[RMDB]
The record gives the reactivity of an RNA of 177 nucleotides to 2A3 and DMS. Source: RMDB library M2PK50, as collected in RNAgym. Conditions: 150 mM KOAc, 10 mM MgCl2 and 150 mM bicine (pH 8.5), 24 C.
RNA sequence: GGGAACGACUCGAGUAGAGUCGAAAAGCUAGGCAUUUCGAUGCCUAGCGAGCGCAGAGUCUAUGCAUCUCUGAAUCACACAACAGCCGUGUCUAUGGGUGGGAGUAUCCCUCUUCGGAGGGAUAAAUCCUUUCAUGUUGUUCGCAACAUGAAAGGAAAAAGAAACAACAACAACAAC
Reactivity to 2A3 in 0.01 (KOAc 150mM, MgCl2 10mM, bicine 150mM(pH8.5), 24C), signal-to-noise 2, nucleotides 027 to 126: g000c000u000a000g010g010c000a020u110u080u080c200g110a000u000g000c020c000u000a000g000c000g010a030g000c080g010c020a020g000a010g070u010c080u100a150u240g040c020a130u020c020u000c000u020g040a030a060u100c010a040c010a000c010a150a070c000a040g090c030c060g090u050g070u010c040u070a110u130g080g000g020u060g020g000g020a020g010u010a000u020c010c000c000u000c010u020u000c130g080g000a000g020g000g000a000u010a000a000a000
Reactivity to DMS in 0.01 (KOAc 150mM, MgCl2 10mM, bicine 150mM(pH8.5), 24C), signal-to-noise 3, nucleotides 027 to 126: g000c000u000a000g000g000c000a020u000u000u020c210g010a030u000g010c000c000u000a000g000c010g000a060g010c140g000c020a030g010a060g020u000c060u000a080u000g000c100a120u000c020u000c000u000g010a110a080u000c080a080c050a050c060a050a070c100a050g000c050c060g020u000g010u000c070u010a060u000g010g000g020u010g000g000g000a120g000u000a010u000c000c000c000u000c000u000u010c180g010g000a020g000g000g000a000u000a000a060a110